An RNA of 177 nucleotides, treated with 2A3 and DMS and read out base by base. The data come from the RNA Mapping Database (RMDB), library OK2TRN. For 2A3 the reverse transcriptase was SuperScript II with manganese.
RNA sequence: GGGAACGACUCGAGUAGAGUCGAAAAAUUGACCCUGAAAUUCAGUGUAUUGCCUUACUACUUUAUGAUGUGUUAGGUUAUAAGAGUGUAUUGCAGAUGCAGGCAAAUAGGCGAGCAUAUUCAGGGAAACCGAAUCAGAUUUCGAUCUGAUUCGGUUAAAAGAAACAACAACAACAAC
Reactivity to 2A3 in 0.01 (KOAc 150mM, MgCl2 10mM, bicine 150mM(pH8.5), 24C), signal-to-noise 3, nucleotides 027 to 126: a010u110u110g040a050c030c000c000u020g030a030a050a090u250u150c110a130g040u000g030u100a300u140u040g000c010c010u010u060a020c040u030a030c020u080u130u030a020u060g040a050u030g140u010g180u200u210a130g130g040u040u010a080u010a040a100g050a000g060u050g020u080a110u090u080g000c030a000g070a300u200g030c050a040g070g050c040a070a050a120u110a050g020g000c020g000a000g010c010a020u020a070u110u000c000a000g000g000g000a010
Reactivity to DMS in 0.01 (KOAc 150mM, MgCl2 10mM, bicine 150mM(pH8.5), 24C), signal-to-noise 3, nucleotides 027 to 126: a080u020u010g000a210c010c000c000u000g010a020a010a160u000u020c150a160g010u010g000u000a060u000u000g020c000c010u010u000a080c050u000a060c020u000u000u000a020u010g010a000u000g000u010g010u010u010a080g020g010u000u000a000u000a040a030g010a030g000u000g010u010a120u010u000g000c020a090g020a100u000g020c090a070g010g000c050a010a040a070u000a060g000g010c020g000a060g010c080a020u000a120u000u000c010a020g010g000g000a080
For DMS, 2,701 sequencing reads were counted.